[RMDB]
RNA sequence: GGGAACGACUCGAGUAGAGUCGAAAAUCAAGUCUGAGGAGGCGAUACUAGUGACAACGGGUAGACUGGAGUACAACUCACAGGAUGUUGAGAACCAUAUCGAUGGGUGACAACACAUGAGGUGGAAUCCCUGCUGGACCUUCGGGUCUAGCAGGGAAAAAGAAACAACAACAACAAC
Reactivity to DMS in 0.01 (KOAc 150mM, MgCl2 10mM, bicine 150mM(pH8.5), 24C), signal-to-noise 5, nucleotides 027 to 126: u010c050a040a100g010u010c030u000g000a140g000g000a080g030g000c040g010a070u010a060c130u010a070g000u000g000a080c160a090a140c140g010g000g030u010a020g010a100c010u020g020g000a030g020u000a030c160a040a090c030u000c020a080c180a090g010g020a100u000g000u000u000g000a040g010a150a080c010c010a040u000a300u010c150g000a060u010g010g000g030u000g000a160c090a030a030c030a040c050a160u010g020a050g000g010u000g000g000a110a160
Reactivity to 2A3 in 0.01 (KOAc 150mM, MgCl2 10mM, bicine 150mM(pH8.5), 24C), signal-to-noise 3, nucleotides 027 to 126: u090c000a010a040g090u020c060u050g040a040g110g030a000g000g070c010g000a020u040a070c040u110a010g060u000g130a000c020a150a000c110g050g000g000u030a020g070a110c040u030g010g020a020g060u060a050c070a060a050c080u020c020a110c020a030g140g000a140u070g000u050u020g040a030g030a120a030c020c010a020u060a050u230c160g190a080u030g050g030g030u100g040a020c020a030a000c000a050c010a100u070g040a020g040g010u040g020g030a010a030
Chemical mapping of a 177-nucleotide RNA with DMS and 2A3. The 2A3 profile rests on 1,822 reads. For DMS, 7,584 sequencing reads were counted. For DMS the reverse transcriptase was MarathonRT. The RNA was probed in 150 mM KOAc, 10 mM MgCl2 and 150 mM bicine (pH 8.5) at 24 C.